[RMDB]
RNA sequence: GGGAACGACUCGAGUAGAGUCGAAAAGCGAUGAGGCUUGUGAAGCGUAGACAGCGGGUACAAAAGCCGCGUAAUUGAGCCACGAAAUAGGUAAACAUUGUAAGAGGCUUUCACCGUUUGGUGCGUGCACGGCAAAGUACUUCGGUACUUUGCCGUGAAAAGAAACAACAACAACAAC
Reactivity to DMS in 0.01 (KOAc 150mM, MgCl2 10mM, bicine 150mM(pH8.5), 24C), signal-to-noise 2, nucleotides 027 to 126: g020c000g010a090u010g020a090g010g000c040u020u000g000u020g010a100a170g010c050g050u010a050g020a140c060a070g000c050g000g010g020u010a040c140a160a080a040a080g020c000c030g000c110g000u000a060a140u020u000g000a160g010c030c000a110c210g000a050a090a080u000a040g030g000u010a070a080a010c060a050u000u000g000u000a090a080g020a130g010g010c050u000u010u000c110a070c030c010g020u010u000u000g030g030u000g000c060g010u010g000